[RMDB]
Record summary:
Conditions: 150 mM KOAc, 10 mM MgCl2 and 150 mM bicine (pH 8.5), 24 C. Chemical mapping of a 177-nucleotide RNA with 2A3. 2A3 adducts were read by reverse transcription with SuperScript II with manganese. Reactivities are given for positions 27 through 126.
RNA sequence: GGGAACGACUCGAGUAGAGUCGAAAACACGGCACAUUUUUCCGAGCCGUUGGAUAGCUUCAUUCCAUUCAAUGUUAGCAAUAAAUUUAUUAAAUCAGAAUCACCUUGGGUUUCCUCUAGGGUUCAAACUGCGCAUACGGUUCGCCGUAUGCGCAGUAAAAGAAACAACAACAACAAC
Reactivity to 2A3 in 0.01 (KOAc 150mM, MgCl2 10mM, bicine 150mM(pH8.5), 24C), signal-to-noise 1, nucleotides 027 to 126: c070a000c060g000g010c000a020c030a140u140u080u000u030u000c050c020g000a000g000c000c000g000u000u000g000g000a090u030a000g040c000u120u000c000a030u080u010c020c000a050u000u200c120a000a000u120g050u160u110a000g070c000a000a000u200a250a130a010u070u130u180a210u000u160a050a060a060u140c090a010g050a100a000u140c000a060c080c000u000u000g000g000g090u000u190u140c080c000u000c000u000a000g110g000g000u000u000c000a060a000